[RMDB]
RNA sequence: GGGAACGACUCGAGUAGAGUCGAAAACGGCCCGGCGGGAGUGGCGGGGAGGGCACUGUGGAAUUAAACAGUGCACCCAUCAUCUGCUGCCAGAAUGCGACUUGCCUGGCCUAUAAAUAGAUGCCACUUCCUGUACCUGGUUCUCGCCUGGCUAAGACACCGUCAUAUUAUUCGUAAUAUGACGGUGAAAAGAAACAACAACAACAAC
Reactivity to 2A3 in 0.01 (KOAc 150mM, MgCl2 10mM, bicine 150mM(pH8.5), 24C), signal-to-noise 2, nucleotides 027 to 156: c030g020g020c000c000c020g020g000c000g000g000g000a030g010u040g050g000c020g010g020g030g000a050g040g030g020c010a000c000u000g000u030g030g140a140a260u180u140a140a160a020c000a000g000u020g010c000a070c000c000c000a090u100c000a000u000c010u060g010c070u030g010c030c000a010g040a080a050u160g020c050g070a190c300u160u230g020c000c000u000g030g000c000c030u010a030u050a050a040a010u120a000g030a030u060g000c030c020a000c000u070u050c020c000u060g060u060a100c000c000u060g070g000u090u000c000u010c010g010c000c000u010g030g020c000u100a080a080g030a050
Chemical mapping of a 207-nucleotide RNA with 2A3.
It was measured as part of the RMDB library OK3TST.
Reactivities are given for positions 27 through 156.
For 2A3 the reverse transcriptase was SuperScript II with manganese.
The RNA was probed in 150 mM KOAc, 10 mM MgCl2 and 150 mM bicine (pH 8.5) at 24 C.
For 2A3, 1,194 sequencing reads were counted.